An RNA of 177 nucleotides, treated with DMS and 2A3 and read out base by base. The DMS profile rests on 60,793 reads.
RNA sequence: GGGAACGACUCGAGUAGAGUCGAAAAACUAGUAUGUACAGGGGUGAGUUGACCUGUCAUCUAGACUGCUGACCAUCAACUCACCGGUCAACUGGAUGAUGUCCACAGAGUACGACAUCAGUACUCAGUGUAAGGUUGCGUUCGCGUAACUUUACACAAAAGAAACAACAACAACAAC
Reactivity to DMS in 0.01 (KOAc 150mM, MgCl2 10mM, bicine 150mM(pH8.5), 24C), signal-to-noise 9, nucleotides 027 to 126: a080c010u000a010g010u010a060u000g010u060a010c010a060g010g010g000g010u000g000a020g010u000u000g000a010c140c160u010g000u000c010a010u000c030u010a120g010a150c190u010g000c100u010g000a030c030c300a300u000c010a000a010c010u000c000a020c010c010g000g000u000c010a010a010c020u000g000g010a060u010g010a070u020g000u010c000c020a100c200a100g000a040g000u000a010c010g010a140c180a120u030c120a080g000u000a010c000u000c010a130
Reactivity to 2A3 in 0.01 (KOAc 150mM, MgCl2 10mM, bicine 150mM(pH8.5), 24C), signal-to-noise 9, nucleotides 027 to 126: a000c010u010a010g020u040a120u240g080u090a010c020a030g300g040g000g010u010g010a010g000u000u010g010a020c020c090u040g020u000c000a010u010c000u040a090g160a270c110u090g020c020u010g010a010c010c020a020u010c000a000a000c000u000c000a000c000c000g000g000u000c000a000a000c000u010g010g010a050u080g030a030u080g100u040c010c000a070c050a080g020a000g010u020a010c040g090a040c100a190u140c030a050g000u000a010c000u000c030a010
About this RNA:
Values cover nucleotides 27 to 126. Conditions: 150 mM KOAc, 10 mM MgCl2 and 150 mM bicine (pH 8.5), 24 C. For 2A3 the reverse transcriptase was SuperScript II with manganese.